RNA sequence: GGGAACGACUCGAGUAGAGUCGAAAACGACGCCUUUCCGCGUGGAGCGGGCCGCAUGUUGGCGAUCAUGCACGCCCUCGACGGCGCGCUCGCCACUGUGUCACCGGGGGCCACGGCCUUCCCGUGGUCGAACGGGAAUUUUCGAAUUCCCGUUCGAAAAAGAAACAACAACAACAAC
Reactivity to DMS in 0.01 (KOAc 150mM, MgCl2 10mM, bicine 150mM(pH8.5), 24C), signal-to-noise 5, nucleotides 027 to 126: c090g000a100c110g000c050c070u000u010u000c030c030g000c030g020u010g010g010a090g010c010g030g000g010c080c040g030c040a080u030g000u010u000g000g000c000g000a080u020c170a110u020g000c060a110c040g000c000c010c020u020c160g010a180c150g000g000c010g030c030g010c010u010c020g000c060c020a060c060u010g000u000g010u010c050a110c030c030g000g020g010g000g000c000c020a060c060g000g000c120c100u020u030c140c000c000g020u010g000g000
Reactivity to 2A3 in 0.01 (KOAc 150mM, MgCl2 10mM, bicine 150mM(pH8.5), 24C), signal-to-noise 9, nucleotides 027 to 126: c040g090a020c040g030c000c020u050u110u060c030c030g050c020g040u090g090g040a040g020c020g000g030g000c000c010g010c030a050u260g030u060u060g080g000c010g020a050u130c090a070u220g070c070a030c020g000c000c030c000u100c090g300a300c050g020g000c060g000c010g000c060u010c010g030c020c000a020c020u090g020u020g050u070c020a040c090c010g030g000g000g000g000c000c000a020c030g020g000c010c010u120u090c030c010c010g020u030g010g020